[RMDB]
RNA sequence: GGGAACGACUCGAGUAGAGUCGAAAAAUCAGAAUAAAAACAGGUAUAAACUACCUUGAUACCGGAAUAAAACGAUCGGGAAAGCGGUGCCAUAAUCCGUACCGCCUUACCAACCUCAGUCAAAAGUAAUCAACACCAUAUUCGUAUGGUGUUGAUUAAAAGAAACAACAACAACAAC
Reactivity to DMS in 0.01 (KOAc 150mM, MgCl2 10mM, bicine 150mM(pH8.5), 24C), signal-to-noise 4, nucleotides 027 to 126: a040u030c030a080g030a150a150u010a050a070a050a080a130c120a060g000g000u000a020u010a110a080a110c240u010a040c100c020u000u000g010a060u010a070c020c010g000g010a060a070u000a120a100a060a080c170g000a040u030c190g010g020g000a100a300a090g000c010g000g030u000g000c000c060a030u000a140a050u050c280c250g000u010a000c000c030g000c000c020u010u040a200c030c000a070a050c100c050u010c150a070g000u000c120a040a080a030a060g000u000
Reactivity to 2A3 in 0.01 (KOAc 150mM, MgCl2 10mM, bicine 150mM(pH8.5), 24C), signal-to-noise 6, nucleotides 027 to 126: a000u090c040a030g130a190a040u180a120a100a040a010a040c070a020g000g020u010a050u060a130a210a040c060u020a040c040c000u020u050g060a030u040a090c040c030g080g040a070a060u130a120a110a030a040c060g070a110u190c060g000g010g000a040a000a000g000c000g000g000u000g000c010c010a100u140a120a070u060c010c020g000u000a020c000c000g020c000c010u200u270a000c000c000a010a020c000c010u080c030a050g100u070c050a040a060a040a010g050u000